RNA sequence: GGGAACGACUCGAGUAGAGUCGAAAAUCAGACUUUUUUUAAAUUGACACUGGAUGUACUUGUUCCUGGACUAACCUUAUUAGAGAGCUUUUGUACGUCAAAGUAGAUUAAUCAGCUGCACUGAGGGCCAAUACUACCCAUUCGUGGGUAGUAUUGGAAAAGAAACAACAACAACAAC
Reactivity to DMS in 0.01 (KOAc 150mM, MgCl2 10mM, bicine 150mM(pH8.5), 24C), signal-to-noise 3, nucleotides 027 to 126: u000c050a070g000a180c020u020u000u010u020u040u000u010a020a050a120u000u000g000a120c060a060c030u000g000g000a050u000g000u000a030c040u000u010g000u010u000c030c030u010g000g010a150c110u000a070a100c140c070u010u000a130u000u000a050g000a070g010a070g010c020u000u010u000u010g000u000a030c030g010u000c070a010a030a070g000u000a130g010a070u000u000a050a040u000c060a060g010c080u000g020c100a080c040u000g000a060g000g000g010
Reactivity to 2A3 in 0.01 (KOAc 150mM, MgCl2 10mM, bicine 150mM(pH8.5), 24C), signal-to-noise 2, nucleotides 027 to 126: u030c010a000g060a080c010u030u090u070u050u060u050u290a060a160a040u090u110g020a020c000a020c070u010g050g020a030u030g030u040a040c020u030u040g030u040u040c000c000u000g040g050a040c030u060a050a050c050c010u100u140a080u100u140a120g030a030g000a010g080c000u080u110u110u140g030u040a030c040g010u000c040a000a090a120g040u070a050g000a060u020u100a050a090u080c030a020g030c030u050g040c030a020c050u000g020a040g000g030g020